[RMDB]
RNA sequence: GGGAACGACUCGAGUAGAGUCGAAAACGAGAUCCGCACCCUCGAACUGCUCAAGCUGCGCUUCGGCGAGGCCAACCUGCACAACUGCGAGGUGAUGCUGAAGGAUGUGGCGGACAGCAAGCGCGUGCCGCUCGUGAGUAUUCGUACUCACGAGCGGAAAAGAAACAACAACAACAAC
Reactivity to DMS in 0.01 (KOAc 150mM, MgCl2 10mM, bicine 150mM(pH8.5), 24C), signal-to-noise 2, nucleotides 027 to 126: c030g020a080g000a070u000c100c030g010c120a160c010c020c010u000c040g010a090a110c070u000g000c020u000c000a120a150g000c020u000g040c060g030c020u000u000c050g000g050c010g020a130g010g040c090c040a090a060c200c030u050g000c020a060c170a120a130c140u040g000c080g000a060g000g000u000g000a140u000g000c000u000g000a050a000g010g000a110u010g000u000g010g000c020g000g000a240c220a050g010c050a040a070g000c100g000c100g020u000g000
Reactivity to 2A3 in 0.01 (KOAc 150mM, MgCl2 10mM, bicine 150mM(pH8.5), 24C), signal-to-noise 2, nucleotides 027 to 126: c010g000a000g000a160u080c050c020g020c020a070c000c030c030u020c040g060a110a050c040u050g000c010u020c030a050a000g000c020u040g040c020g010c000u030u040c010g040g000c050g010a100g110g140c010c010a040a060c010c020u100g000c060a110c040a210a300c150u070g030c010g100a040g030g000u040g020a080u200g000c010u050g010a050a000g050g170a210u140g030u020g070g000c020g010g010a070c000a010g010c020a000a050g000c020g030c010g070u070g000